Source: RMDB libraries RFM100 and RFMREP, as collected in RNAgym. This 177-nucleotide RNA was probed chemically with DMS and 2A3. 2A3 adducts were read by reverse transcription with SuperScript II with manganese.
RNA sequence: GGGAACGACUCGAGUAGAGUCGAAAAUGAGAAUGAAUCCUAAUUCGACACUAGGUGGUAACCCCUCGCUAUUAUUCGGAAUAGGACACUCUCUAUCAGAAUGAAUUCUUGCUGUAAUAACAGAUAGAUAUUGUGGUUCGUUCGCGAACCACAAUAUAAAAGAAACAACAACAACAAC
Reactivity to DMS in 0.01 (KOAc 150mM, MgCl2 10mM, bicine 150mM(pH8.5), 24C), signal-to-noise 2, nucleotides 027 to 126: u000g020a010g000a000a070u020g020a220a240u030c000c000u030a020a040u000u000c030g000a050c300a100c300u000a000g040g000u000g020g000u060a200a120c300c210c000c000u000c000g040c030u000a000u030u020a080u050u010c030g040g010a000a110u000a030g000g000a020c030a060c020u000c060u000c000u000a130u010c110a080g000a110a070u000g000a130a080u010u000c040u010u040g000c000u000g000u010a220a100u040a030a110c050a010g000a200u060a090g000
Reactivity to 2A3 in 0.01 (KOAc 150mM, MgCl2 10mM, bicine 150mM(pH8.5), 24C), signal-to-noise 3, nucleotides 027 to 126: u170g010a010g020a040a000u030g040a040a110u010c000c000u030a060a080u000u010c010g000a000c020a010c030u010a010g000g000u030g020g030u060a080a070c000c000c080c010u010c010g300c070u010a040u240u040a090u140u030c000g030g020a010a000u010a010g000g000a000c000a000c020u010c010u000c000u000a050u130c050a090g170a150a080u130g030a080a080u170u000c030u010u150g020c000u020g000u130a090a130u050a250a050c010a030g020a030u090a020g140